[RMDB]
RNA sequence: GGGAACGACUCGAGUAGAGUCGAAAAGAUCAACAGACUAUUGGUGGCCUCAUCAGCAACGAUUUUUACCGAGAGGUUCGCUGACACAGCGCCAGUAUUGAACGCGGAGACAUUGUCCGCAAUGUCGGGCGCUAGGUGUAUUCGUACACCUAGCGCCAAAAGAAACAACAACAACAAC
Reactivity to 2A3 in 0.01 (KOAc 150mM, MgCl2 10mM, bicine 150mM(pH8.5), 24C), signal-to-noise 1, nucleotides 027 to 126: g040a150u140c020a010a090c020a120g060a050c000u030a040u090u060g050g050u070g210g000c050c000u020c030a040u000c010a000g010c020a040a050c050g060a040u050u120u030u110u240a070c040c050g030a060g000a010g150g000u040u020c020g000c000u000g000a010c040a020c020a110g040c020g000c010c010a010g040u020a080u070u200g080a080a020c080g000c040g140g140a050g060a080c050a170u090u150g000u060c030c080g020c070a050a000u050g010u020c030g030
Reactivity to DMS in 0.01 (KOAc 150mM, MgCl2 10mM, bicine 150mM(pH8.5), 24C), signal-to-noise 1, nucleotides 027 to 126: g000a070u000c030a150a230c130a070g000a080c100u000a000u000u000g010g000u000g030g000c000c020u000c280a230u000c020a000g020c040a120a070c110g000a100u000u000u000u000u000a060c170c060g010a020g000a110g000g020u000u000c080g030c040u000g000a000c080a080c300a270g000c030g010c020c000a030g020u000a090u000u000g010a070a210c070g020c020g000g000a040g000a060c090a070u000u000g000u010c020c090g050c020a020a060u000g000u000c020g000
The record gives the reactivity of an RNA of 177 nucleotides to 2A3 and DMS. For 2A3, 857 sequencing reads were counted. 2A3 adducts were read by reverse transcription with SuperScript II with manganese. Reactivities are given for positions 27 through 126. DMS (dimethyl sulfate) methylates the pairing face of unpaired adenines and cytosines.